[RMDB]
RNA sequence: GGGAACGACUCGAGUAGAGUCGAAAAUGCUAUGAACAAGGAAUAGCUGGAACACUGGGUAAAAUACAGAAAUCCUGAGUAAAAUUCAGUGAUCCCUCGCCAUCCAGGUGAUUCCGAGGCAGGUGACCCAGCCAUGACACUUGAAGAUUGCCUAGAACGUGAGCAAAAUAUUCGUAUUUUGCUCACGAAAAGAAACAACAACAACAAC
Reactivity to 2A3 in 0.01 (KOAc 150mM, MgCl2 10mM, bicine 150mM(pH8.5), 24C), signal-to-noise 3, nucleotides 027 to 156: u080g000c000u020a030u190g010a030a000c010a000a020g000g000a020a010u000a000g000c010u010g010g000a020a010c010a010c030u020g030g000g000u140a150a180a080a050u260a100c060a080g090a030a150a000u010c010c000u000g030a010g010u050a040a170a120a080u090u000c000a000g010u010g220a050u080c020c010c000u000c030g000c020c030a020u010c000c010a040g020g100u040g020a230u010u020c040c020g010a020g000g000c010a020g000g030u040g070a070c010c010c030a010g030c010c010a030u060g020a040c010a020c040u000u060g020a040a030g050a090u120u110g000c020c010u040a050g050a190a020
Reactivity to DMS in 0.01 (KOAc 150mM, MgCl2 10mM, bicine 150mM(pH8.5), 24C), signal-to-noise 2, nucleotides 027 to 156: u000g000c030u000a080u000g020a040a100c050a050a050g020g010a080a010u000a040g010c010u000g010g020a070a080c080a050c060u010g010g000g020u000a060a050a040a100u000a130c040a110g020a030a070a050u000c010c040u000g020a080g010u000a070a080a130a200u000u010c050a020g000u000g010a060u000c010c050c000u000c080g070c100c090a040u000c030c030a090g030g020u000g000a130u000u000c020c000g020a070g010g060c010a130g000g000u000g020a000c020c010c050a190g000c010c030a090u000g000a150c020a040c030u010u000g010a060a100g000a110u000u010g000c010c030u000a080g000a110a140
Annotation
The record gives the reactivity of an RNA of 207 nucleotides to 2A3 and DMS. The reactions ran in a buffer of 150 mM KOAc, 10 mM MgCl2 and 150 mM bicine (pH 8.5), at 24 C. It was measured as part of the RMDB library OK3TST. DMS adducts were read by reverse transcription with MarathonRT. 2A3 adducts were read by reverse transcription with SuperScript II with manganese.